[RMDB]
RNA sequence: GGGAACGACUCGAGUAGAGUCGAAAAGCAUUGGCAAUAAAUCACUACUAGACAUUUUAUUUAAAAUCUGGCACUGGCUUUGGAGAGGUGAGGGAUUGUCAAUUUGUUUUUAUUUUGAGGCCAGGCACACGAUGGUCAGAUUCGUCUGACCAUCGUGAAAAGAAACAACAACAACAAC
Reactivity to 2A3 in 0.01 (KOAc 150mM, MgCl2 10mM, bicine 150mM(pH8.5), 24C), signal-to-noise 2, nucleotides 027 to 126: g080c010a010u000u020g010g000c000a000a040u030a060a100a010u100c030a000c010u080a000c020u020a030g070a110c100a060u110u200u080u070a220u030u210u220a120a050a020a030u090c090u000g140g000c040a020c220u000g000g060c060u100u050u040g050g010a070g010a020g050g030u100g010a080g000g080g040a000u030u000g010u000c000a010a000u030u010u070g020u000u040u050u040u030a140u010u140u100u140g080a020g000g000c000c000a010g010g000c010a000
Reactivity to DMS in 0.01 (KOAc 150mM, MgCl2 10mM, bicine 150mM(pH8.5), 24C), signal-to-noise 2, nucleotides 027 to 126: g040c160a060u000u000g000g010c010a000a010u000a020a080a080u000c000a040c010u000a110c070u010a070g020a120c090a060u040u010u020u040a130u030u050u070a040a030a050a030u010c030u000g050g000c020a170c040u000g130g000c070u000u020u010g030g000a090g000a300g020g010u000g030a040g030g000g010a020u000u020g000u020c020a000a010u020u000u000g000u010u040u010u020u000a090u040u030u010u030g030a050g000g010c020c020a010g000g020c030a300